Structure probing data (2A3) for a 207-nucleotide construct. 2A3 is a SHAPE reagent: it acylates the 2'-hydroxyl of flexible nucleotides of all four kinds.
RNA sequence: GGGAACGACUCGAGUAGAGUCGAAAAGAGUACAUAUGCCCAGCCUUACUGUAACGGCUGGAUGCUUCGUGCAAAUGCUAUGUACGCCUACGUAUAUGUGCGUAGAUGCCUAUAUUUUCUCUCCUGAGAAAAUAUAGAUGCAUACAAAGUUAAUGCACCUCCGGAUAAUGUUCGCAUUAUCCGGAGGAAAAGAAACAACAACAACAAC
Reactivity to 2A3 in 0.01 (KOAc 150mM, MgCl2 10mM, bicine 150mM(pH8.5), 24C), signal-to-noise 2, nucleotides 027 to 156: g090a000g010u000a000c000a000u010a030u300g010c000c000c000a010g010c050c020u200u170a210c100u300g100u300a080a070c030g000g000c000u000g000g000a040u040g000c010u020u210c110g000u110g040c040a030a180a130u130g000c000u030a030u020g000u000a000c000g010c010c000u000a000c010g010u000a080u070a030u180g170u070g050c000g000u000a010g000a040u050g010c000c030u000a000u000a000u000u000u000u000c000u000c030u040c070c190u150g000a000g000a000a020a000a000u000a010u000a000g010a030u230g010c000a030u060a100c010a000a000a010g050u030u040a080a000u100g020c050a000